[RMDB]
RNA sequence: GGGAACGACUCGAGUAGAGUCGAAAAGUUAAUUGUGCGUCUAUUGUCUGUAGGUGUCAAGAUCCUAAAUACACCAUUAUUCAGGACACACAAGUGACAAAUGUGAUGAUUAGUUCACAAGACUGUAGACACGUAUAUCUUUCGAGAUAUACGUGUCAAAAGAAACAACAACAACAAC
Reactivity to DMS in 0.01 (KOAc 150mM, MgCl2 10mM, bicine 150mM(pH8.5), 24C), signal-to-noise 7, nucleotides 027 to 126: g010u000u000a040a050u010u000g030u000g010c040g010u000c000u010a140u010u000g000u000c030u000g020u000a090g000g020u000g010u000c170a120a150g000a130u010c110c100u000a050a100a110u010a040c030a020c020c020a160u010u010a060u000u000c020a060g010g000a020c000a030c010a000c000a000a020g010u000g000a010c010a050a120a070u000g000u000g000a020u000g010a170u000u010a120g010u010u000c000a000c020a040a090g000a250c040u000g020u010a140
Reactivity to 2A3 in 0.01 (KOAc 150mM, MgCl2 10mM, bicine 150mM(pH8.5), 24C), signal-to-noise 5, nucleotides 027 to 126: g000u000u010a010a040u030u010g000u010g020c020g000u000c030u040a210u150u230g020u030c020u030g150u180a050g000g010u010g010u010c050a030a030g110a190u170c030c040u090a100a060a020u100a020c010a010c010c000a000u010u040a010u020u060c010a010g020g000a010c000a010c010a000c000a030a000g030u020g040a010c010a010a080a040u070g010u010g010a020u010g030a070u110u260a080g160u070u000c010a010c010a020a040g090a030c050u090g070u180a020